[RMDB]
RNA sequence: GGGAACGACUCGAGUAGAGUCGAAAACCUGUUAUCUGACCAAUAACAGAAUGCACCACAGCGUAAAAUCAUCUGAUUGGGUGAGUUGGUCGCACCGCCAUGUGACGAACGAACGCCAAGCCUAAGCACUACGAGUAUGUGUUCGCACAUACUCGAACAUGAGCGAGGAGUUCGCUCCUCGCUCAUGAAAAGAAACAACAACAACAAC
Reactivity to 2A3 in 0.01 (KOAc 150mM, MgCl2 10mM, bicine 150mM(pH8.5), 24C), signal-to-noise 2, nucleotides 027 to 156: c000c000u000g000u000u030a040u010c040u010g000a030c010c000a000a020u000a000a010c000a030g160a040a170u140g040c010a040c040c000a040c070a070g070c020g060u100a000a020a020a160u100c080a050u030c100u110g110a110u050u090g030g030g000u000g010a030g030u030u050g000g010u030c000g050c030a000c030c020g110c060c020a120u100g050u030g000a050c070g020a190a010c000g000a070a000c050g000c040c000a030a080g000c030c010u110a160a060g070c040a080c120u110a050c150g000a000g000u000a000u000g050u000g000u000u090c100g010c010a000c000a000u000a000c010u000c000g010a020a010